The record gives the reactivity of an RNA of 177 nucleotides to DMS and 2A3. Reactivities are given for positions 27 through 126. 2A3 is a SHAPE reagent: it acylates the 2'-hydroxyl of flexible nucleotides of all four kinds. For 2A3 the reverse transcriptase was SuperScript II with manganese. DMS adducts were read by reverse transcription with MarathonRT.
RNA sequence: GGGAACGACUCGAGUAGAGUCGAAAAGAAAGAAAGAAAGAAUUCCAAUGAUGAGAUCGAUGGAAAAUGUGUUAGGGUAUGAACAUUGAUGAUUUACUAUACCAUACUGCCUUCCUUCUGAGGAAAAUAAUCCUAGAGAGUUCGCUCUCUAGGAUUAAAAAGAAACAACAACAACAAC
Reactivity to DMS in 0.01 (KOAc 150mM, MgCl2 10mM, bicine 150mM(pH8.5), 24C), signal-to-noise 7, nucleotides 027 to 126: g010a090a100a050g010a060a060a080g000a090a070a060g000a120a100u010u000c010c030a070a130u010g000a050u000g010a100g010a300u000c070g000a060u000g000g000a030a030a080a040u020g020u010g010u010u010a070g000g000g010u010a030u020g010a060a050c070a070u010u030g010a090u010g000a080u010u010u010a070c090u020a050u010a040c040c020a060u010a050c050u000g010c090c020u000u010c010c010u000u010c050u020g000a170g020g000a070a030a050a100
Reactivity to 2A3 in 0.01 (KOAc 150mM, MgCl2 10mM, bicine 150mM(pH8.5), 24C), signal-to-noise 7, nucleotides 027 to 126: g070a010a110a000g100a060a080a020g070a030a090a020g070a020a070u060u000c020c010a030a060u110g040a050u030g050a020g030a110u080c060g040a030u060g020g050a070a060a020a050u140g080u020g040u110u100a040g050g000g030u070a060u080g050a050a050c050a120u070u170g040a060u060g020a040u130u070u060a080c040u020a030u020a100c020c010a020u060a100c050u090g030c010c000u020u020c010c000u030u050c040u070g060a070g000g040a020a000a010a020
The reactions ran in a buffer of 150 mM KOAc, 10 mM MgCl2 and 150 mM bicine (pH 8.5), at 24 C.